[RMDB]
RNA sequence: GGGAACGACUCGAGUAGAGUCGAAAAAUUAGCGAAUACGGUCUAUUGCUACCAGUGGAGCCAUCAUCACGCUUGAUUUCGCAAACGGAGCUAUUCCAAAUUGCGCAUUCGAUAGUGUCUGCUCACACCGUAUUAAUGAGUUCGCUCAUUAAUACGGAAAAGAAACAACAACAACAAC
Reactivity to DMS in 0.01 (KOAc 150mM, MgCl2 10mM, bicine 150mM(pH8.5), 24C), signal-to-noise 8, nucleotides 027 to 126: a090u010u010a060g020c040g010a070a060u010a080c130g010g000u000c070u000a070u010u000g010c040u010a080c090c050a090g020u010g000g010a080g000c040c080a040u000c090a040u020c060a070c060g010c080u000u000g000a050u000u000u000c020g010c020a030a050a100c300g010g000a030g020c230u000a070u010u000c010c020a030a100a160u010u000g000c010g000c100a040u000u000c030g010a060u010a060g020u000g010u000c080u000g000c020u000c050a090c210a170
Reactivity to 2A3 in 0.01 (KOAc 150mM, MgCl2 10mM, bicine 150mM(pH8.5), 24C), signal-to-noise 7, nucleotides 027 to 126: a000u100u070a020g030c030g070a060a030u100a100c080g040g020u020c060u100a100u060u120g020c030u050a080c010c020a050g060u090g080g040a030g040c040c020a060u080c010a020u050c010a020c030g020c020u030u040g010a050u040u070u070c000g000c000a030a010a030c050g030g000a020g020c090u160a180u200u050c000c000a020a070a190u050u030g020c020g000c020a020u030u040c020g030a030u030a080g050u040g020u050c050u070g010c010u010c010a050c000a030